[RMDB]
RNA sequence: GGGAACGACUCGAGUAGAGUCGAAAAAAGCUUGCCCGUGAUACAGGUCGAGAGUGAGUCUCCUCUCGCAAAUCAAAGGCUCAAAAAAAAGUAACUGCGAAUAACAUCGUCAGCUUCAAACGGGUAGCCAUAGCAGCCUAGUCUGUAAAAGCUACAUCAUCAAUAAAUCCUUCGGGAUUUAUUGAUGAAAAGAAACAACAACAACAAC
Reactivity to 2A3 in 0.01 (KOAc 150mM, MgCl2 10mM, bicine 150mM(pH8.5), 24C), signal-to-noise 2, nucleotides 027 to 156: a000a010g070c070u020u050g050c050c000c010g030u060g020a100u140a130c140a050g000g170u060c010g010a010g000a000g000u030g000a030g000u000c080u070c160c010u000c000u000c020g100c120a050a040a000u040c040a030a000a000g000g000c000u000c000a090a140a070a020a000a020a000a020g040u050a030a030c010u020g000c020g000a000a030u080a150a070c030a050u070c020g080u070c060a030g040c070u090u050c070a050a080a080c050g090g020g000u000a000g000c000c000a030u130a070g000c000a010g000c000c100u140a070g050u250c000u010g000u040a000a170a000a000g000c000u000a030c000a020u030
Description: Chemical mapping of a 207-nucleotide RNA with 2A3. For 2A3 the reverse transcriptase was SuperScript II with manganese. The 2A3 profile rests on 1,133 reads. Conditions: 150 mM KOAc, 10 mM MgCl2 and 150 mM bicine (pH 8.5), 24 C. Values cover nucleotides 27 to 156.